[RMDB]
Structure probing data (DMS) for a 207-nucleotide construct. It was measured as part of the RMDB library OK3TST. Conditions: 150 mM KOAc, 10 mM MgCl2 and 150 mM bicine (pH 8.5), 24 C.
RNA sequence: GGGAACGACUCGAGUAGAGUCGAAAAUCGGCGACACGCAUCUCAGACUGCACCACUGUCGUUAUGACCGAGCCCCCUGGUGCGAACCGUGGGCCCCCUGUUUGUCCCGGAGUCGUCUUGACCGAGCCGCGGAGAAAAGGAAGAGGGGGAAACCACAUAAUAGGCAUCGAUUCGUCGAUGCCUAUUAAAAAGAAACAACAACAACAAC
Reactivity to DMS in 0.01 (KOAc 150mM, MgCl2 10mM, bicine 150mM(pH8.5), 24C), signal-to-noise 1, nucleotides 027 to 156: u010c050g040g050c030g040a070c030a090c140g060c010a110u020c010u030c010a100g000a090c120u000g000c080a030c010c000a240c220u030g000u010c030g040u010u000a100u000g030a090c060c030g010a130g030c070c050c010c070c120u010g000g000u000g010c030g000a170a120c090c030g000u020g010g030g000c000c000c010c020c050u000g000u000u000u000g050u000c030c030c090g000g020a170g030u000c030g020u030c110u020u000g030a070c050c000g010a100g010c030c030g050c040g000g030a300g010a050a060a100a150g000g010a100a070g010a110g050g000g030g000g000a060a030a070c010c020a020c020a100